[RMDB]
RNA sequence: GGGAACGACUCGAGUAGAGUCGAAAAGCUAGUCGGUGACGACUAGCAGCCACGACUAAGGUCGUGGGAAGAUGCUCACAAACAGCACAGUGGCAUCAAUAACUACAUCAUGUGCUGAAACCGGAUUAACGGAUAAAAUUAAAAUUUAAGAUGUAGGUAAAUUAAAAUCAUUCGUGAUUUUAAUUUAAAAAGAAACAACAACAACAAC
Reactivity to DMS in 0.01 (KOAc 150mM, MgCl2 10mM, bicine 150mM(pH8.5), 24C), signal-to-noise 1, nucleotides 027 to 156: g040c020u010a010g000u000c000g000g010u000g000a240c010g040a010c000u000a020g020c010a080g000c000c000a010c030g010a010c000u000a200a180g080g030u000c010g030u010g010g010g000a090a050g020a000u000g030c010u020c020a050c050a000a090a140c060a000g000c020a050c000a240g020u020g000g020c040a030u000c000a130a270u000a090a070c000u000a050c040a030u000c030a100u000g000u010g040c020u000g000a120a160a240c000c000g000g000a300u000u000a090a050c010g040g020a200u010a020a070a100a190u000u000a040a080a120a100u000u000u000a100a220g000a060u000g010u020a090g030g000
Reactivity to 2A3 in 0.01 (KOAc 150mM, MgCl2 10mM, bicine 150mM(pH8.5), 24C), signal-to-noise 2, nucleotides 027 to 156: g010c000u000a000g000u000c000g030g070u080g030a050c010g000a000c000u010a010g010c000a010g020c000c000a000c000g000a000c000u090a230a140g210g000u000c000g000u000g000g010g000a070a040g020a000u010g020c040u120c300a010c000a010a160a050c010a000g010c000a000c000a000g010u020g000g000c000a000u000c010a010a070u210a050a020c000u000a010c000a010u000c000a010u090g000u000g020c000u000g000a090a010a010c030c000g000g060a140u180u210a170a080c000g000g030a040u180a030a070a040a030u230u150a060a040a040a070u100u140u060a060a010g010a000u010g000u010a020g000g010
An RNA of 207 nucleotides, treated with DMS and 2A3 and read out base by base. For DMS, 1,944 sequencing reads were counted. Conditions: 150 mM KOAc, 10 mM MgCl2 and 150 mM bicine (pH 8.5), 24 C. The data come from the RNA Mapping Database (RMDB), library OK3TST. 2A3 adducts were read by reverse transcription with SuperScript II with manganese. Reactivities are given for positions 27 through 156.